An RNA of 177 nucleotides, treated with DMS and 2A3 and read out base by base. The RNA was probed in 150 mM KOAc, 10 mM MgCl2 and 150 mM bicine (pH 8.5) at 24 C. DMS adducts were read by reverse transcription with MarathonRT.

[RMDB]
RNA sequence: GGGAACGACUCGAGUAGAGUCGAAAAUACCCUGUAGAUAGAGCUGUGUGUUUGGAAUAUACCGUACACAAGCUAGACUACAAGGUGAAAAAAGAGUUAAUACUCCAGUUCGCUGGAGUAUUAACUCCAUAACAAUGACCUUCGGGUCAUUGUUAUGAAAAGAAACAACAACAACAAC
Reactivity to DMS in 0.01 (KOAc 150mM, MgCl2 10mM, bicine 150mM(pH8.5), 24C), signal-to-noise 4, nucleotides 027 to 126: u010a050c000c000c020u000g010u000a010g010a140u000a100g010a010g020c000u000g020u000g030u000g010u000u000u010g020g010a240a170u010a160u000a110c010c010g000u000a010c000a000c000a090a040g010c000u000a050g000a120c000u000a000c010a000a010g000g010u000g000a010a040a080a070a070a090g000a020g000u010u000a000a010u000a010c000u000c000c000a010g010u000u020c230g020c000u000g000g010a010g010u000a000u000u000a000a000c000u000c000
Reactivity to 2A3 in 0.01 (KOAc 150mM, MgCl2 10mM, bicine 150mM(pH8.5), 24C), signal-to-noise 2, nucleotides 027 to 126: u050a000c010c000c020u000g000u020a020g010a190u030a040g130a010g020c010u020g040u010g000u010g080u300u170u220g040g030a110a040u270a020u090a300c000c020g000u010a000c000a000c010a030a010g000c000u000a040g050a040c010u000a000c010a030a000g060g000u090g070a120a040a060a030a040a050g010a000g000u000u010a020a000u010a010c000u000c000c000a010g000u090u070c120g050c120u020g000g010a000g010u000a000u000u000a010a000c000u000c000